[RMDB]
RNA sequence: GGGAACGACUCGAGUAGAGUCGAAAAGACUCAGUAGAGGAAAGACUAGCUGCUUAAUUAGCAAAAGUUGUUAGCUAGAUAAUCUCUAGGUAACCCGGUAUCUGCGAGCUCCACCAGAGGCUUGCAAAAUACCGUCAUUUAUCUGGUUGGAACUUACGUAUGCUACGUAGUUCGCUACGUAGCAUACAAAAGAAACAACAACAACAAC
Reactivity to 2A3 in 0.01 (KOAc 150mM, MgCl2 10mM, bicine 150mM(pH8.5), 24C), signal-to-noise 3, nucleotides 027 to 156: g030a000c030u020c110a020g020u050a020g030a040g000g080a080a130a000g110a050c020u010a020g020c010u020g050c030u100u130a150a160u210u120a150g090c110a050a090a090a090g070u090u100g040u120u140a000g040c000u000a000g000a000u060a020a100u020c020u010c010u040a010g080g000u020a040a030c010c010c020g000g000u010a030u000c020u020g010c000g000a000g000c000u020c010c010a030c010c000a010g000a010g040g000c000u000u000g000c000a000a000a010a010u010a000c020c000g070u020c040a080u120u200u250a050u030c030u010g040g000u000u010g050g040a100a020c010u010u000a010c060
Structure probing data (2A3) for a 207-nucleotide construct.
For 2A3, 1,494 sequencing reads were counted.
Conditions: 150 mM KOAc, 10 mM MgCl2 and 150 mM bicine (pH 8.5), 24 C.